[RMDB]
RNA sequence: GGGAACGACUCGAGUAGAGUCGAAAAGAAAGGCGAACACACACGACGCCGAAAUAAAUACUCAGAAAUGAGUAGACCUCACAAUAAAAAGUGUGUGGAUGAUCGAAAGAUCAGGUGAGGAAAGAAAGGGUACUUACAUGUUCGCAUGUAAGUACCCAAAAGAAACAACAACAACAAC
Reactivity to 2A3 in 0.01 (KOAc 150mM, MgCl2 10mM, bicine 150mM(pH8.5), 24C), signal-to-noise 2, nucleotides 027 to 126: g130a040a080a000g000g000c020g030a070a010c000a010c000a010c010a010c100g260a020c010g000c000c000g000a020a000a000u040a000a040a020u040a000c000u010c010a030g020a050a060a010u030g010a000g000u000a010g010a040c000c000u010c000a000c000a000a080u180a230a010a000a010a010g020u020g000u000g000u040g040g050a090u050g000a000u000c010g060a060a040a030g000a000u000c000a010g000g040u010g010a010g040g100a130a040a010g130a030a080a110
Reactivity to DMS in 0.01 (KOAc 150mM, MgCl2 10mM, bicine 150mM(pH8.5), 24C), signal-to-noise 3, nucleotides 027 to 126: g000a130a090a100g000g000c000g000a190a080c030a030c000a010c000a050c040g050a210c010g000c010c000g000a110a060a060u020a060a050a030u000a010c010u000c000a000g000a080a050a100u010g000a020g000u000a010g000a120c000c010u000c010a010c030a080a050u060a070a050a050a050a070g000u000g020u000g000u000g000g000a170u020g000a010u010c010g030a130a070a120g000a020u000c020a050g000g000u000g030a000g000g010a060a060a100g000a030a130a140